[RMDB]
RNA sequence: GGGAACGACUCGAGUAGAGUCGAAAAGGACAUCCACACGGAGGUAAGCAGACAAAUCACCUCCAGAGGACCCCUUCAGCGAACAGAGAGCUCUGAGCCGCGAGGAGUAAGAUCAUAGCGAUAGGAGGAUUAAGUUCCAGUUCGCUGGAACUUAAUCAAAAGAAACAACAACAACAAC
Reactivity to DMS in 0.01 (KOAc 150mM, MgCl2 10mM, bicine 150mM(pH8.5), 24C), signal-to-noise 2, nucleotides 027 to 126: g030g000a110c130a220u000c000c030a030c240a300c180g030g010a030g000g000u000a150a110g010c140a100g020a150c210a090a080a200u010c120a070c000c010u020c010c000a040g020a200g000g000a050c110c030c000c020u000u000c080a100g000c030g000a010a010c040a050g000a080g010a080g010c030u000c020u000g000a080g020c060c010g000c030g000a090g000g000a050g000u010a050a080g000a110u000c040a030u000a200g000c070g000a060u000a180g000g020a150g010
Reactivity to 2A3 in 0.01 (KOAc 150mM, MgCl2 10mM, bicine 150mM(pH8.5), 24C), signal-to-noise 1, nucleotides 027 to 126: g030g000a040c000a060u000c000c010a070c000a000c080g000g000a000g060g000u060a070a070g030c080a090g130a300c070a040a180a070u130c020a010c000c000u000c000c000a010g030a000g000g000a020c030c000c000c030u030u090c030a020g030c000g040a000a000c020a060g090a000g010a020g120c010u000c020u070g010a050g070c040c000g040c020g020a030g050g020a020g030u020a010a090g020a070u020c020a040u080a020g020c020g050a050u050a070g010g070a050g080